[RMDB]
RNA sequence: GGGAACGACUCGAGUAGAGUCGAAAAGGUAUCCACUUCGGUGGAUACCAAAGGCGAUCCCACCAUCAGGGAACAACAACAAUAGAUGCAUCCCUAACGCCAAAAUUCCGGAUUUCGAUCCGGAAAAUCUAAACGAACAGUUCGCUGUUCGUUUAGAAAAAGAAACAACAACAACAAC
Reactivity to DMS in 0.01 (KOAc 150mM, MgCl2 10mM, bicine 150mM(pH8.5), 24C), signal-to-noise 2, nucleotides 027 to 126: g030g000u000a000u000c010c010a000c000u010u020c120g000g040u000g010g000a020u010a020c010c000a000a050a060g000g010c040g040a210u020c010c000c010a190c110c100a060u000c240a030g000g000g020a080a110c040a080a030c050a080a060c160a100a110u020a090g000a180u000g030c150a080u000c000c000c000u010a080a140c040g020c010c010a080a070a060a150u000u000c010c000g000g010a040u000u020u040c130g010a040u000c000c010g000g000a000a020a020a100
Reactivity to 2A3 in 0.01 (KOAc 150mM, MgCl2 10mM, bicine 150mM(pH8.5), 24C), signal-to-noise 2, nucleotides 027 to 126: g000g000u000a000u000c000c010a000c030u050u070c170g100g000u000g010g000a000u000a000c000c010a020a000a010g000g000c010g020a070u000c060c010c020a010c060c020a120u210c080a010g000g010g050a010a110c030a030a000c010a020a030c030a160a180u080a250g120a060u080g050c040a040u000c000c010c020u020a110a040c020g000c000c040a020a130a000a100u040u010c000c000g000g010a010u050u080u060c190g040a010u060c000c000g000g000a000a000a000a000
Chemical mapping of a 177-nucleotide RNA with DMS and 2A3. Source: RMDB library M2PK50, as collected in RNAgym. DMS adducts were read by reverse transcription with MarathonRT. Values cover nucleotides 27 to 126. For 2A3 the reverse transcriptase was SuperScript II with manganese.